[RMDB]
RNA sequence: GGGAACGACUCGAGUAGAGUCGAAAACAUCUUUCCUCCCUACACAGUGACUCCAGCUUGGGAGGGUCAGGGCUAGGCUGAGCCAGCACUCCCUGUGGUGUCUGCCUGCCACGUGCAGCUCUGGAGUAAAACCUGGAGAAGUUCGCUUCUCCAGGAAGUUGACGUGAAGCUUCGGCUUCACGUCAACAAAAGAAACAACAACAACAAC
Reactivity to 2A3 in 0.01 (KOAc 150mM, MgCl2 10mM, bicine 150mM(pH8.5), 24C), signal-to-noise 2, nucleotides 027 to 156: c010a100u080c080u080u150u080c000c000u030c030c000c010u100a080c210a070c070a130g100u020g150a040c000u000c010c000a040g000c000u020u050g010g000g000a030g000g000g000u000c050a040g020g000g040c030u270a010g010g000c010u050g040a010g250c040c030a000g010c030a000c050u070c040c000c000u010g060u040g030g000u040g020u020c040u010g020c030c030u070g050c060c040a150c160g140u210g020c010a040g000c010u000c010u080g000g000a000g010u040a020a020a000a020c000c000u000g000g000a010g000a010a010g000u030u160c150g010c140u000u020c000u000c020c000a000g000g000a000a030